[RMDB]
RNA sequence: GGGAACGACUCGAGUAGAGUCGAAAAGGAGCCAAACUCGAACCAGGGAGACCCACGCUAGAGCAAAAACCAUUGGGUAAUCCAUUAGGACCAGCGUAGUCUUCUCGAUUACUCUUGUGGCAUUAACCUACAAGUGUGGUUUCGACCACACUUGUAGAAAAGAAACAACAACAACAAC
Reactivity to DMS in 0.01 (KOAc 150mM, MgCl2 10mM, bicine 150mM(pH8.5), 24C), signal-to-noise 3, nucleotides 027 to 126: g000g020a120g010c010c040a030a110a100c070u000c040g020a060a070c090c040a120g020g010g000a030g000a070c040c060c070a030c050g010c020u000a070g010a150g020c130a080a120a030a150a100c000c030a070u010u000g000g010g010u000a090a050u010c000c050a060u000u010a040g000g010a100c040c040a060g020c080g010u000a160g000u000c000u000u000c050u000c140g010a050u000u000a060c040u000c030u010u010g030u000g020g000c040a100u010u020a070a080c190
Reactivity to 2A3 in 0.01 (KOAc 150mM, MgCl2 10mM, bicine 150mM(pH8.5), 24C), signal-to-noise 2, nucleotides 027 to 126: g080g000a050g020c030c030a080a030a100c030u040c040g050a030a010c030c040a040g000g050g000a010g010a020c000c030c060a020c050g010c000u050a040g020a050g100c090a060a030a070a050a050c000c000a020u010u040g010g020g040u140a070a140u030c030c000a020u040u110a110g000g040a010c030c020a030g090c040g070u040a010g010u010c000u070u000c030u020c020g040a040u020u110a070c000u000c000u060u120g040u040g030g000c020a070u090u140a040a020c000